[RMDB]
RNA sequence: GGGAACGACUCGAGUAGAGUCGAAAAACUUUGAGGGUAUCGCCAUCGCUAGUGCUGGCAACCGUAUAGGAGAUUGUCUUUACCGGAUCAAUGUCGUUGGUCGUGGUGCUGGGGGGUGGGCUGCACCACUCCUGGUCGCAUUCGUGCGACCAGGAGUAAAAGAAACAACAACAACAAC
Reactivity to 2A3 in 0.01 (KOAc 150mM, MgCl2 10mM, bicine 150mM(pH8.5), 24C), signal-to-noise 1, nucleotides 027 to 126: a000c140u130u110u170g060a100g150g050g040u060a070u200c090g000c060c060a030u060c020g040c110u190a130g040u030g180c010u000g000g000c020a000a020c010c010g030u080a050u060a140g080g030a060g020a100u030u090g140u000c020u020u080u030a050c000c030g000g060a020u070c000a060a120u060g100u210c050g070u050u100g030g000u030c000g000u010g010g010u010g040c010u050g010g020g000g000g040g010u160g030g010g000c050u080g010c010a040c040c070
Reactivity to DMS in 0.01 (KOAc 150mM, MgCl2 10mM, bicine 150mM(pH8.5), 24C), signal-to-noise 2, nucleotides 027 to 126: a070c080u000u000u000g030a230g000g000g030u010a070u010c120g010c070c050a020u000c050g040c070u000a100g010u010g030c110u000g000g010c030a090a030c010c030g010u000a120u010a120g000g010a100g000a140u000u010g010u000c030u000u000u000a110c100c050g020g000a090u000c080a070a090u040g010u010c050g010u000u000g010g000u010c050g040u000g020g010u000g000c030u000g020g020g000g000g000g010u000g000g010g000c060u000g000c060a040c030c010
This 177-nucleotide RNA was probed chemically with 2A3 and DMS.